[RMDB]
RNA sequence: GGGAACGACUCGAGUAGAGUCGAAAACGCCUUCGAACAGGUCUUACUCUUAAUAAAUUGCUAUUUAAUUUUAUUACCGACCUGUUCGCAGCGGGUAAGGAUUAAAUAUUGCUAAAUUUAUUAAGAGCAAUUAUUAUAUCUUCGGAUAUAAUAAUUGAAAAGAAACAACAACAACAAC
Reactivity to 2A3 in 0.01 (KOAc 150mM, MgCl2 10mM, bicine 150mM(pH8.5), 24C), signal-to-noise 3, nucleotides 027 to 126: c040g060c010c010u070u090c050g050a050a020c030a040g000g010u000c020u080u190a090c010u010c000u000u000a000a000u000a010a010a010u050u120g000c000u000a010u010u010u020a020a010u000u040u010u140a180u070u030a030c000c030g080a090c010c000u000g010u000u030c060g000c010a010g090c070g030g000g000u010a020a020g010g010a000u000u000a000a000a000u020a010u040u050g000c000u070a140a040a060u000u020u010a010u020u000a000a000g000a000g010
Reactivity to DMS in 0.01 (KOAc 150mM, MgCl2 10mM, bicine 150mM(pH8.5), 24C), signal-to-noise 1, nucleotides 027 to 126: c210g000c060c020u010u000c100g000a050a070c150a060g000g000u000c020u080u040a260c010u000c000u000u000a030a000u000a000a020a000u010u010g000c000u000a010u010u040u010a010a000u000u000u040u040a050u020u000a030c040c030g010a090c210c000u010g000u000u050c080g040c080a030g050c150g010g000g010u000a000a020g000g000a010u010u000a010a000a000u000a010u040u020g000c010u010a020a050a030u000u000u000a000u000u000a010a000g000a000g000